[RMDB]
RNA sequence: GGGAACGACUCGAGUAGAGUCGAAAAACGCUUCACAAUGUGCGGCAAAGAAACAUUGUUUAUGCAAAAGCACUUCGCAAUGUGUGCUCAAACAUUGCUUAUUCAAACACGCUUCACAAUGUGCGACAAAACUUCACGGUCUUCGGACCGUGAAGAAGUUAGGUUUCAACUUCGGUUGAAACCUAACAAAAGAAACAACAACAACAAC
Reactivity to DMS in 0.01 (KOAc 150mM, MgCl2 10mM, bicine 150mM(pH8.5), 24C), signal-to-noise 1, nucleotides 027 to 156: a030c010g010c040u000u010c060a090c000a010a070u010g020u000g100c010g010g000c020a190a020a070g030a060a010a000c020a020u000u000g020u000u000u010a060u010g000c040a040a180a040a130g040c010a020c060u000u000c080g000c130a150a080u010g000u000g020u000g000c010u010c010a060a180a030c040a040u000u000g010c000u000u010a060u010u000c090a120a130a070c040a080c050g000c090u000u010c130a180c140a100a070u000g010u000g000c000g040a200c030a050a050a060a160c000u000u000c000a010c020g060g020u000c010u030u000c300g040g010a000c010c000g030u000g000a010a000g000a020a070
Reactivity to 2A3 in 0.01 (KOAc 150mM, MgCl2 10mM, bicine 150mM(pH8.5), 24C), signal-to-noise 6, nucleotides 027 to 156: a000c010g000c010u000u010c010a000c000a000a020u000g000u000g010c020g060g040c120a130a100a070g100a010a050a000c010a010u000u010g080u030u080u080a130u120g040c030a020a050a040a050g000c000a000c000u030u040c040g000c020a010a020u010g020u000g030u020g040c080u110c170a020a050a000c010a030u010u010g000c000u060u090a170u090u120c070a040a070a020c030a020c070g040c020u120u110c090a030c030a180a170u150g040u040g030c010g080a040c100a010a090a050a050c000u000u000c000a010c000g000g000u000c000u030u050c070g080g000a000c000c000g000u000g000a000a000g000a000a000
Chemical mapping of a 207-nucleotide RNA with DMS and 2A3. Source: RMDB library M2RFPK, as collected in RNAgym.